This 177-nucleotide RNA was probed chemically with 2A3 and DMS. DMS adducts were read by reverse transcription with MarathonRT. The DMS profile rests on 2,150 reads. The data come from the RNA Mapping Database (RMDB), libraries RFM100 and RFMREP.
RNA sequence: GGGAACGACUCGAGUAGAGUCGAAAAGGAUGCUAGAAGACACUUUCUUCAUGGAGUGUAUUGGCAUUCUAGGUUAGCAUGUAGGAGCGGAAGAGGGCGACUGUAUUGCGUAGCGAGAGGUGAAAGUGAUAGGUGCACCAUUCGUGGUGCACCUAUCAAAAGAAACAACAACAACAAC
Reactivity to 2A3 in 0.01 (KOAc 150mM, MgCl2 10mM, bicine 150mM(pH8.5), 24C), signal-to-noise 7, nucleotides 027 to 126: g010g010a000u010g000c000u040a040g070a230a020g090a070c000a000c000u100u180u220c060u210u190c100a210u300g010g000a010g000u010g010u020a060u040u090g010g000c000a000u010u010c000u010a010g050g000u060u070a010g030c030a040u070g040u060a050g000g070a040g020c020g010g050a050a030g030a050g020g010g000c010g010a030c020u020g020u090a100u060u140g010c020g010u010a030g030c020g020a040g000a020g080g060u060g060a090a070a010g080u050
Reactivity to DMS in 0.01 (KOAc 150mM, MgCl2 10mM, bicine 150mM(pH8.5), 24C), signal-to-noise 2, nucleotides 027 to 126: g010g050a010u000g000c000u000a070g030a100a090g000a010c010a000c010u010u020u050c060u020u100c280a060u040g000g000a000g040u000g000u000a030u000u040g000g090c000a000u000u000c000u000a060g060g000u000u030a050g010c020a070u010g000u010a080g010g000a090g010c040g050g030a060a120g010a120g010g010g010c090g000a050c140u000g010u000a040u020u010g000c160g000u030a030g010c080g000a080g040a060g010g010u000g000a080a040a080g000u030